[RMDB]
About this RNA
An RNA of 177 nucleotides, treated with DMS and 2A3 and read out base by base.

RNA sequence: GGGAACGACUCGAGUAGAGUCGAAAAGAUAUGGAUCCCACAGGGAGCUCUGGGUCGGAAACGACCCUGAGCAUCGAUCUGUUGGAUCCUAAGUCAAAGAAUUUCCUAGCUUCGGCUAGGAAAUUCAUCAGUUAUACGAGUUCGCUCGUAUAACUGAAAAAGAAACAACAACAACAAC
Reactivity to DMS in 0.01 (KOAc 150mM, MgCl2 10mM, bicine 150mM(pH8.5), 24C), signal-to-noise 2, nucleotides 027 to 126: g010a010u000a060u000g000g020a010u000c000c000c110a000c010a030g020g000g020a110g030c000u000c000u000g010g010g020u000c000g000g010a020a020a050c000g010a010c000c010c000u000g000a010g020c010a170u010c290g000a140u010c020u010g040u000u000g010g000a010u000c000c000u000a010a090g000u000c010a120a160a140g000a010a010u000u010u000c000c000u000a000g010c010u000u010c240g020g020c000u010a000g020g000a000a000a000u000u000c000a170
Reactivity to 2A3 in 0.01 (KOAc 150mM, MgCl2 10mM, bicine 150mM(pH8.5), 24C), signal-to-noise 1, nucleotides 027 to 126: g020a030u020a000u070g000g000a010u030c010c070c000a000c000a000g120g070g110a250g040c010u000c020u070g000g010g010u010c000g000g010a010a040a030c010g000a010c030c020c000u000g010a000g000c000a000u050c020g060a260u000c000u010g000u000u010g000g000a000u000c000c000u000a020a010g000u010c020a070a060a240g000a020a010u000u000u000c010c010u000a000g000c000u090u070c300g160g000c010u010a000g030g000a010a000a010u000u000c000a000
Annotation
For DMS, 2,836 sequencing reads were counted. DMS adducts were read by reverse transcription with MarathonRT.